[RMDB]
RNA sequence: GGGAACGACUCGAGUAGAGUCGAAAACUUUAUGGACUUCUCGGAAACAAUCUUAUCGCGACUAACGAGUUGGGCCAACAAGCCAAGUGCUGCAGUUGCAAGAUUGUGGCUUGUGGAUAGCAGUGCCCAUGACUGAGUCCUUCGGGACUCAGUCAUGAAAAGAAACAACAACAACAAC
Reactivity to 2A3 in 0.01 (KOAc 150mM, MgCl2 10mM, bicine 150mM(pH8.5), 24C), signal-to-noise 3, nucleotides 027 to 126: c000u050u120u170a110u130g030g030a010c000u020u000c000u050c000g020g100a070a060a040c020a060a060u050c020u040u140a080u190c100g000c050g040a100c000u070a080a030c000g050a020g050u000u020g070g090g000c000c020a050a030c010a070a000g010c000c000a110a010g080u050g070c050u020g000c030a140g020u180u200g030c020a010a060g030a050u080u090g050u040g160g030c000u010u020g000u060g060g010a020u040a090g010c050a000g020u030g090c000c000
Reactivity to DMS in 0.01 (KOAc 150mM, MgCl2 10mM, bicine 150mM(pH8.5), 24C), signal-to-noise 2, nucleotides 027 to 126: c050u010u030u060a100u020g000g030a070c030u000u020c020u000c050g040g000a060a030a100c230a080a040u000c040u020u020a040u000c120g030c050g020a100c120u000a170a120c050g000a050g020u000u000g000g000g010c000c000a050a030c060a040a030g040c000c010a040a060g000u050g020c070u020g000c060a260g000u000u030g000c070a070a050g000a040u000u010g050u000g000g010c000u000u000g000u000g000g010a020u010a090g040c090a050g020u020g000c000c040

Record summary:
The record gives the reactivity of an RNA of 177 nucleotides to 2A3 and DMS. DMS adducts were read by reverse transcription with MarathonRT. The reactions ran in a buffer of 150 mM KOAc, 10 mM MgCl2 and 150 mM bicine (pH 8.5), at 24 C. The data come from the RNA Mapping Database (RMDB), library OK1LIB.